[RMDB]
RNA sequence: GGGAACGACUCGAGUAGAGUCGAAAAGUUGAAACACCACACCUUGAAUUUCGUGAUUGACGAAUACGACAUUUAUGACGUAAUUGGAAGCCAUCCAAAUAUCUUAAAGGUUGAAGACUUCAAUCGCCAUACCGGCACAGUUCGCUGUGCCGGUAUGAAAAGAAACAACAACAACAAC
Reactivity to DMS in 0.01 (KOAc 150mM, MgCl2 10mM, bicine 150mM(pH8.5), 24C), signal-to-noise 2, nucleotides 027 to 126: g000u000u010g010a120a070a170c140a140c050c080a130c140a070c020c010u010u020g020a080a050u000u000u010c060g040u000g010a020u000u010g040a070c010g020a070a150u010a090c050g010a020c020a060u000u020u010a070u010g000a050c080g000u010a060a160u010u000g030g000a020a140g030c160c140a080u010c030c010a000a060a080u000a090u000c030u010u000a050a040a050g000g000u000u010g010a050a070g020a130c090u010u000c000a000a060u000c030g010c050
Reactivity to 2A3 in 0.01 (KOAc 150mM, MgCl2 10mM, bicine 150mM(pH8.5), 24C), signal-to-noise 1, nucleotides 027 to 126: g020u000u050g050a030a070a030c020a020c050c000a030c010a080c030c010u100u110g110a090a090u150u170u130c030g020u000g030a090u000u080g040a030c020g000a050a040u090a020c000g000a020c030a010u040u090u020a100u060g030a020c030g000u030a020a140u020u020g000g020a030a040g140c020c000a060u000c010c010a080a080a050u130a060u000c010u040u050a010a000a000g060g020u010u040g060a100a040g040a050c000u010u010c030a000a020u040c000g000c000